[RMDB]
RNA sequence: GGGAACGACUCGAGUAGAGUCGAAAAGAUCGGCAGCGAAGUGCCGCAGGACCAGUGGGACAAGCACUAUCUCGUCCCAUAAGACCAGAACCCGAUAAGCUUGACCCGUCGGUUUUGGUCAAGCCAACAUAUAAUCCGCUUUCGAGCGGAUUAUAUGAAAAGAAACAACAACAACAAC
Reactivity to DMS in 0.01 (KOAc 150mM, MgCl2 10mM, bicine 150mM(pH8.5), 24C), signal-to-noise 6, nucleotides 027 to 126: g010a060u000c010g010g010c000a060g010c080g020a150a140g010u000g000c000c010g010c140a110g010g010a130c060c060a270g030u010g010g000g010a020c010a040a050g010c290a150c280u010a110u010c030u000c060g000u010c000c010c000a020u000a040a120g000a100c020c030a120g000a060a080c020c020c020g010a070u020a110a140g000c020u000u000g000a030c020c010c200g020u010c110g020g010u000u000u010u010g010g000u000c010a020a020g010c040c140a070a140
Reactivity to 2A3 in 0.01 (KOAc 150mM, MgCl2 10mM, bicine 150mM(pH8.5), 24C), signal-to-noise 3, nucleotides 027 to 126: g030a130u130c020g020g000c000a020g040c100g240a200a020g160u030g010c010c000g000c020a040g000g060a060c020c040a030g010u030g000g000g010a000c020a080a010g040c050a050c220u070a150u190c040u010c030g000u030c060c000c000a000u050a060a030g010a010c020c010a030g030a060a050c070c000c010g000a150u060a190a030g010c020u060u050g020a040c000c040c040g080u080c040g190g000u060u060u140u100g010g000u000c000a000a010g000c000c000a030a010

The record gives the reactivity of an RNA of 177 nucleotides to DMS and 2A3. For 2A3 the reverse transcriptase was SuperScript II with manganese. Reactivities are given for positions 27 through 126. For 2A3, 3,285 sequencing reads were counted. Reactivities are rounded to 0.1 and cut off at 0 and 3. Conditions: 150 mM KOAc, 10 mM MgCl2 and 150 mM bicine (pH 8.5), 24 C. It was measured as part of the RMDB library OK2TST. The DMS profile rests on 5,154 reads.